[RMDB]
RNA sequence: GGGAACGACUCGAGUAGAGUCGAAAACACAACGGGAUGAACCAACAAAAACACCAAUUCCAGUCCCCACACAAGCCCCUAAACCAUAUGAAGCUAGUGAUGGUGAGUCAUGGCGUGAAGUGAUUAAUCCAACACCUAAGUUCGCUUAGGUGUUGGAAAAAGAAACAACAACAACAAC
Reactivity to DMS in 0.01 (KOAc 150mM, MgCl2 10mM, bicine 150mM(pH8.5), 24C), signal-to-noise 4, nucleotides 027 to 126: c050a040c190a070a120c140g030g000g000a040u020g010a110a090c030c080a060a090c130a020a060a070a080a090c060a090c050c020a060a080u010u000c030c010a120g000u000c040c000c000c050a090c100a020c130a060a050g000c010c000c000c030u010a050a110a070c060c020a040u060a080u040g000a060a140g000c060u010a090g030u060g010a030u010g000g000u010g000a200g010u010c030a030u010g020g000c080g030u010g010a090a180g000u020g020a100u020u010a040a220
Reactivity to 2A3 in 0.01 (KOAc 150mM, MgCl2 10mM, bicine 150mM(pH8.5), 24C), signal-to-noise 3, nucleotides 027 to 126: c150a010c040a060a110c100g000g000g010a070u150g040a040a030c040c000a040a100c060a050a070a040a000a000c030a000c010c000a030a090u110u060c050c010a000g030u000c040c000c050c000a010c020a000c020a040a030g000c040c000c000c000u120a130a060a010c060c000a010u110a070u300g070a080a050g030c060u080a020g070u010g160a080u020g000g020u120g040a070g000u000c040a120u020g070g020c090g000u060g070a140a020g030u030g070a080u060u070a020a020